This 207-nucleotide RNA was probed chemically with 2A3. Conditions: 150 mM KOAc, 10 mM MgCl2 and 150 mM bicine (pH 8.5), 24 C. For 2A3, 510 sequencing reads were counted. Source: RMDB library M2RFPK, as collected in RNAgym. Values cover nucleotides 27 to 156.
RNA sequence: GGGAACGACUCGAGUAGAGUCGAAAAUAGCGAAGUAGGAUUUUAUGCGUCAAGUGUUCACAGGCUGGGGAGUCGUCGUGAAACGAAAAGCAGAAAGCGUGCUGCUUACGAUAUAAUUUCCGCACCCAUAAGAAGUCUCUGUUCGCAGAGACUUCAAGAAACCGCGUAAGUUCGCUUACGCGGUUUCAAAAGAAACAACAACAACAAC
Reactivity to 2A3 in 0.01 (KOAc 150mM, MgCl2 10mM, bicine 150mM(pH8.5), 24C), signal-to-noise 1, nucleotides 027 to 156: u120a010g060c030g030a100a000g040u090a040g000g000a010u000u000u020u090a000u010g020c010g000u010c040a050a080g050u070g010u300u040c020a000c040a030g070g000c050u050g010g040g040g000a020g000u030c020g040u010c010g000u040g000a030a030a000c040g060a070a000a000a000g000c040a020g120a060a290a040g140c100g090u130g040c000u000g010c000u020u060a000c000g010a000u000a000u000a180a070u030u030u000c010c010g060c000a040c000c010c000a010u060a160a060g000a000a000g000u070c000u000c000u000g030u080u110c140g040c120a000g000a000g000a000c010u000u030c000a000a000